[RMDB]
RNA sequence: GGGAACGACUCGAGUAGAGUCGAAAAACGGGCAGUGGCGAUGGCAACGCGGCAGCCGCAGGGUCGACUUCUUCGCAGCCGCAACAGACGGGUGACGGGCAAAGAGGGGUGCUCGUUCUGUUGGAAGGUCCAUUAGCCGUUUCGACGGCUAAUGGACAAAAGAAACAACAACAACAAC
Reactivity to 2A3 in 0.01 (KOAc 150mM, MgCl2 10mM, bicine 150mM(pH8.5), 24C), signal-to-noise 1, nucleotides 027 to 126: a010c040g000g020g010c010a020g000u060g080g000c020g120a100u010g020g000c030a030a000c080g020c000g110g000c060a050g010c020c000g000c000a050g060g000g000u040c020g150a170c000u080u000c000u030u030c070g060c010a000g020c000c000g000c000a000a000c030a010g080a040c030g020g000g000u040g100a030c000g000g000g000c090a000a170a000g060a000g020g010g000g110u090g000c000u000c000g000u060u040c000u000g020u000u010g000g000a080a080g040
Background: Chemical mapping of a 177-nucleotide RNA with 2A3. The reactions ran in a buffer of 150 mM KOAc, 10 mM MgCl2 and 150 mM bicine (pH 8.5), at 24 C. Reactivities are given for positions 27 through 126. The 2A3 profile rests on 734 reads. The data come from the RNA Mapping Database (RMDB), library OK1LIB. High 2A3 reactivity points to a flexible backbone, as in loops and unpaired stretches.